[RMDB]
RNA sequence: GGGAACGACUCGAGUAGAGUCGAAAAUAGCCAAUAGGGGAACGACACAGCAGCAGGGGCCACGUGCAUCAGGGAUAAGAACCCCUUCCCCUCCCUUGUCCAAAUGUGUGCUCACCAUUGUUCCAUCUAUAAGGGCGCACGCUUCUAUAUAGAAGUACUGGCUAAUAGUCUUCGGACUAUUAGCCAGAAAAGAAACAACAACAACAAC
Reactivity to 2A3 in 0.01 (KOAc 150mM, MgCl2 10mM, bicine 150mM(pH8.5), 24C), signal-to-noise 1, nucleotides 027 to 156: u130a000g010c040c000a060a070u010a000g000g000g010g000a030a000c000g090a020c020a000c020a080g150c050a010g010c050a020g000g000g030g010c060c040a090c190g020u040g030c010a040u060c090a110g000g010g100a000u110a130a050g030a070a090c000c020c000c030u000u020c050c000c000c000u050c000c000c000u040u030g140u010c030c060a100a080a080u080g030u020g030u030g000c070u050c030a080c010c010a000u040u050g040u140u050c020c000a090u030c000u040a050u020a070a030g160g000g000c020g000c000a000c060g000c000u000u030c020u080a250u090a180u100a230g020a000a000g030u080a050
An RNA of 207 nucleotides, treated with 2A3 and read out base by base. 2A3 adducts were read by reverse transcription with SuperScript II with manganese.